[RMDB]
RNA sequence: GGGAACGACUCGAGUAGAGUCGAAAAUCAGACUAUCCAGCCCGAGGUAAAAGAAGUUGCACCUGUCUAUGAGGCUGAUACCGAACAGACACAGAAUGUUACUGUUAAACCUAAGAGGUUACGCAAAGCCACUUACAUACUUCGGUAUGUAAGUGGCAAAAGAAACAACAACAACAAC
Reactivity to DMS in 0.01 (KOAc 150mM, MgCl2 10mM, bicine 150mM(pH8.5), 24C), signal-to-noise 1, nucleotides 027 to 126: u000c050a150g090a120c090u060a170u000c100c010a060g010c000c000c000g040a060g000g000u000a110a130a170a100g000a090a100g020u040u000g020c130a110c110c010u000g040u000c130u000a020u000g000a300g000g020c020u000g010a040u020a070c060c020g060a020a040c070a120g010a070c000a050c110a050g000a020a060u000g020u000u010a040c090u000g020u000u050a050a070a000c000c010u000a090a150g040a110g020g000u010u000a090c210g010c070a040a070a090
Source information:
The data come from the RNA Mapping Database (RMDB), library 15KREP. The record gives the reactivity of an RNA of 177 nucleotides to DMS. Reactivities are rounded to 0.1 and cut off at 0 and 3. For DMS the reverse transcriptase was MarathonRT.